[RMDB]
RNA sequence: GGGAACGACUCGAGUAGAGUCGAAAAACAGCGAAAGGCACAAGACUUCGAACAUUAUAGCAGUUAGUAGUUGCAUAAACCCAUUGCAAUAUAUGGGACAGUAGAGGUCGCAAGCCUAUACUGUGCGAAAAGUCGCAAGGUUUCGACCUUGCGACAAUCGCUUGAUAAUGUUCGCAUUAUCAAGCGAAAAAGAAACAACAACAACAAC
Reactivity to DMS in 0.01 (KOAc 150mM, MgCl2 10mM, bicine 150mM(pH8.5), 24C), signal-to-noise 2, nucleotides 027 to 156: a080c050a040g040c030g020a080a090a060g010g010c060a110c060a150a120g010a070c010u000u000c000g010a050a080c040a190u000u010a060u000a110g000c020a090g000u000u000a150g000u000a080g020u000u020g000c010a090u000a010a050a260c000c000c000a010u000u000g010c090a150a140u000a090u000a000u000g000g010g010a060c070a050g000u000a110g000a010g070g030u000c020g010c260a120a190g000c010c010u000a090u000a010c020u000g030u000g000c030g010a030a090a090a160g000u000c000g020c000a020a010g000g020u010u000u010c260g010a040c010c010u000u000g050c000g030a020c000a010a030
Reactivity to 2A3 in 0.01 (KOAc 150mM, MgCl2 10mM, bicine 150mM(pH8.5), 24C), signal-to-noise 2, nucleotides 027 to 156: a000c030a010g030c050g040a200a150a050g030g000c000a040c050a070a020g000a010c000u000u010c030g010a040a030c040a120u070u100a030u080a060g040c020a000g020u040u130a030g070u140a030g020u100u040g000c000a010u060a090a180a200c000c000c000a000u010u030g000c000a000a000u040a000u000a010u110g000g010g020a010c000a000g020u010a010g000a000g020g000u000c020g000c060a040a000g000c000c010u000a000u000a000c000u000g010u030g010c010g060a000a010a070a110g000u000c000g000c000a000a000g040g000u040u080u140c210g060a100c000c010u000u000g000c000g000a000c000a000a000